[RMDB]
RNA sequence: GGGAACGACUCGAGUAGAGUCGAAAACUCCCUUCCUCCUCAAGGAAGCCAAAGACACCAUCACAAUCAGGCAGCCAGGAGCCAGGGCUUCCAUAGGCCCAGCUCUGUACCUGUAGGGGGAUGGAAUAUCGCACCUCACUUUCGAGUGAGGUGCGAUAAAAGAAACAACAACAACAAC
Reactivity to 2A3 in 0.01 (KOAc 150mM, MgCl2 10mM, bicine 150mM(pH8.5), 24C), signal-to-noise 1, nucleotides 027 to 126: c000u000c000c020c000u000u060c030c010u060c040c000u110c110a000a000g060g000a150a130g070c030c000a300a030a000g110a110c060a020c040c000a140u210c000a010c220a230a140u140c070a030g000g050c090a010g080c060c060a010g010g000a000g000c010c030a150g000g000g000c000u060u120c250c000a020u040a040g040g000c000c000c000a040g000c000u080c000u020g000u010a040c000c000u130g060u080a050g060g080g000g000g000a000u000g000g070a040a100u000